[RMDB]
Source: RMDB library TTRDEL, as collected in RNAgym. This 177-nucleotide RNA was probed chemically with DMS and 2A3. The DMS profile rests on 4,374 reads. 2A3 adducts were read by reverse transcription with SuperScript II with manganese. The reactions ran in a buffer of 150 mM KOAc, 10 mM MgCl2 and 150 mM bicine (pH 8.5), at 24 C. Values cover nucleotides 27 to 126.
RNA sequence: GGGAACGACUCGAGUAGAGUCGAAAAGAUAUGGAAAUCUAGUCGCCUAAGACAGUUUGUCGGAAACGACAAAUCGAGGAACUACGACGAAGAUUUCCUAAGUCAAAGGGAGGCUUCGGCCUCCCAACCUUACUACUACCUUCGGGUAGUAGUAAGGAAAAGAAACAACAACAACAAC
Reactivity to DMS in 0.01 (KOAc 150mM, MgCl2 10mM, bicine 150mM(pH8.5), 24C), signal-to-noise 4, nucleotides 027 to 126: g010a020u010a280u000g000g000a010a000a000u000c000u000a300g000u010c000g020c030c050u010a100a150g010a120c300a070g000u000u000u000g000u000c000g010g000a060a070a090c000g010a010c000a010a010a010u000c020g020a080g000g010a080a070c110u000a170c030g000a020c000g000a090a110g000a010u010u000u000c000c000u000a010a080g000u010c030a050a100a130g000g000g010a020g020g000c020u000u010c230g040g010c000c010u000c000c000c000a000a020
Reactivity to 2A3 in 0.01 (KOAc 150mM, MgCl2 10mM, bicine 150mM(pH8.5), 24C), signal-to-noise 4, nucleotides 027 to 126: g000a010u030a010u100g000g020a010a010a000u010c010u000a020g020u010c030g180c100c070u120a140a040g070a030c020a030g040u010u010u020g010u010c000g000g030a030a030a030c000g010a000c000a020a000a000u120c070g040a060g050g010a080a070c160u280a100c300g000a000c050g040a070a070g010a020u000u020u020c000c000u000a040a000g010u030c020a000a000a180g010g000g010a010g000g000c030u080u130c300g100g000c030c000u010c000c000c000a000a000